[RMDB]
RNA sequence: GGGAACGACUCGAGUAGAGUCGAAAAUAGCGAAGUAGGAUUUUAUGCGUCAAGUGUUCACAGGCUGGGGAGUCGCCGUGAAACGAAAAGAAGAAAGCGUGCUGCUUACGAUAUAAUUUCCGCACCCAUAAGAAGUCUCUGUUCGCAGAGACUUCAAGGUUACCUAGACGUUCGCGUCUAGGUAACCAAAAGAAACAACAACAACAAC
Reactivity to 2A3 in 0.01 (KOAc 150mM, MgCl2 10mM, bicine 150mM(pH8.5), 24C), signal-to-noise 2, nucleotides 027 to 156: u130a010g060c030g030a050a000g060u080a100g050g020a060u060u010u000u010a020u120g030c030g020u040c070a100a050g050u040g060u080u030c030a050c040a070g020g050c020u060g030g000g030g020a070g050u020c000g000c040c000g070u080g040a040a020a030c030g000a070a050a020a070g120a050a020g060a020a060a000g050c030g040u080g060c030u050g020c000u050u030a010c030g010a020u010a000u000a060a060u050u030u000c000c000g040c000a020c000c050c000a040u120a190a010g000a000a000g000u010c000u000c000u000g020u030u060c100g020c050a000g000a000g010a000c000u000u000c000a000a000